Structure probing data (DMS and 2A3) for a 177-nucleotide construct. For DMS the reverse transcriptase was MarathonRT. The RNA was probed in 150 mM KOAc, 10 mM MgCl2 and 150 mM bicine (pH 8.5) at 24 C. 2A3 adducts were read by reverse transcription with SuperScript II with manganese.
RNA sequence: GGGAACGACUCGAGUAGAGUCGAAAACACUCGGGCGGGUGAACAUCACCGGCUCAGCUGGAUUCUCGAACCCCCGACACCUCUACGCUCAGCGCACACAACCCCGAAAAAGACUUCGGCCCCCGCCAUUCCCUAUUAGCUUCGGCUAAUAGGGAAUAAAAGAAACAACAACAACAAC
Reactivity to DMS in 0.01 (KOAc 150mM, MgCl2 10mM, bicine 150mM(pH8.5), 24C), signal-to-noise 4, nucleotides 027 to 126: c070a060c040u010c110g010g020g040c010g000g000g000u010g010a110a200c230a160u020c020a020c010c030g010g010c000u010c020a030g000c160u000g020g020a130u000u010c020u010c020g020a150a230c080c030c000c000c020g010a070c070a060c030c010u020c050u010a040c070g020c040u000c010a050g010c060g000c030a050c060a050c090a090a100c080c020c010c000g010a050a070a080a110a070g000a080c060u020u010c030g020g000c010c030c000c010c020g000c090c090
Reactivity to 2A3 in 0.01 (KOAc 150mM, MgCl2 10mM, bicine 150mM(pH8.5), 24C), signal-to-noise 6, nucleotides 027 to 126: c030a010c010u040c040g000g020g000c070g030g020g010u050g050a110a080c060a170u180c010a020c020c000g130g000c010u030c040a010g030c070u040g030g030a090u080u020c020u020c040g080a100a080c000c020c000c000c010g010a010c010a030c040c010u020c030u040a030c030g020c030u040c030a030g010c010g010c030a010c000a000c000a060a160c040c010c000c020g040a080a010a010a010a010g070a040c030u030u010c030g020g000c000c000c000c000c000g010c020c000